[RMDB]
RNA sequence: GGGAACGACUCGAGUAGAGUCGAAAAAUACAAGGGGAGGUUUCGGCCAAAUGUUGUAUGCAGAAAGCGUGAGGAAGGUAGCACUUAGACCCUCACGAGUAGCGGUUCGGCAGUAGUGCUAAAAUGAGACAGUACGAAAAGUUCGCUUUUCGUACAAGGACAUUAGGAACUUCGGUUCCUAAUGUCCAAAAGAAACAACAACAACAAC
Reactivity to DMS in 0.01 (KOAc 150mM, MgCl2 10mM, bicine 150mM(pH8.5), 24C), signal-to-noise 1, nucleotides 027 to 156: a080u010a140c060a120a080g010g000g030g000a010g070g010u030u000u010c070g030g000c070c030a050a020a110u010g010u000u000g010u000a160u030g020c000a040g000a030a050a140g020c070g040u000g010a080g000g010a120a090g010g000u000a050g000c080a090c010u000u000a120g000a150c120c010c050u000c020a000c050g000a110g010u000a120g030c050g050g000u000u000c050g030g010c000a120g020u000a030g020u010g010c030u020a000a060a120a100u010g000a050g010a130c010a090g010u010a010c000g010a000a000a020a050g030u010u010c280g040c020u000u000u000u000c020g030u000a010c010a020a090
Reactivity to 2A3 in 0.01 (KOAc 150mM, MgCl2 10mM, bicine 150mM(pH8.5), 24C), signal-to-noise 2, nucleotides 027 to 156: a000u110a030c040a040a040g040g000g020g050a050g030g040u050u050u100c020g040g000c040c030a070a070a110u160g010u000u020g000u040a050u090g050c010a010g060a110a070a010g030c020g000u010g000a000g020g010a060a080g050g050u030a010g070c000a010c030u000u020a040g070a120c010c020c000u010c000a010c010g000a010g000u080a010g020c080g030g060u080u080c010g030g000c010a000g000u070a000g000u000g050c020u050a010a040a020a120u060g000a010g000a040c030a080g000u000a000c000g000a000a000a000a000g010u040u030c120g070c120u000u000u000u000c000g000u010a010c000a000a000